Chemical mapping of a 207-nucleotide RNA with DMS and 2A3.
2A3 adducts were read by reverse transcription with SuperScript II with manganese.
DMS adducts were read by reverse transcription with MarathonRT.
2A3 is a SHAPE reagent: it acylates the 2'-hydroxyl of flexible nucleotides of all four kinds.
The data come from the RNA Mapping Database (RMDB), library OK3TST.
For 2A3, 1,727 sequencing reads were counted.
The reactions ran in a buffer of 150 mM KOAc, 10 mM MgCl2 and 150 mM bicine (pH 8.5), at 24 C.
RNA sequence: GGGAACGACUCGAGUAGAGUCGAAAAAGCGUGAACACUGUGUGACCUCCCAGGAGCUGCAGAAGCAGGCAGAGCUGAUGGAAUUUGAGAUUGCACUGAAGGCCCUCUCAGUACUACGCUACAUCACAGACUGUGUGGACAGGUGAGCAGUCCGACAACCCGAUUUAUGAUUCGUCAUAAAUCGGGUAAAAGAAACAACAACAACAAC
Reactivity to DMS in 0.01 (KOAc 150mM, MgCl2 10mM, bicine 150mM(pH8.5), 24C), signal-to-noise 2, nucleotides 027 to 156: a050g020c050g040u010g060a060a110c070a090c030u000g020u000g010u000g000a100c020c030u010c010c010c020a190g010g020a090g030c000u000g010c010a120g000a110a100g010c000a060g010g040c030a100g010a090g000c050u010g010a110u000g010g010a110a140u010u000u010g010a110g010a130u010u000g000c050a030c030u010g000a080a120g010g020c030c000c000u000c060u000c020a070g050u010a070c050u000a050c030g030c030u000a070c030a050u000c070a110c050a160g010a090c010u020g030u020g010u000g020g000a100c030a120g030g020u000g030a130g010c040a140g020u010c030c010g030a090c030a100
Reactivity to 2A3 in 0.01 (KOAc 150mM, MgCl2 10mM, bicine 150mM(pH8.5), 24C), signal-to-noise 3, nucleotides 027 to 156: a000g090c060g010u060g010a030a020c020a010c090u080g030u020g030u070g180a070c000c010u040c000c000c000a000g010g070a030g020c020u070g030c040a030g020a200a010g040c080a020g030g000c020a000g000a050g050c020u050g020a090u160g030g050a080a070u150u050u030g050a070g010a030u110u010g010c020a020c050u050g030a070a050g050g000c000c010c000u010c000u000c040a030g050u040a090c030u000a020c050g030c030u090a030c010a040u100c050a000c030a030g110a100c040u070g030u040g000u030g060g000a010c030a090g030g050u000g010a010g010c010a020g000u000c030c030g040a050c050a010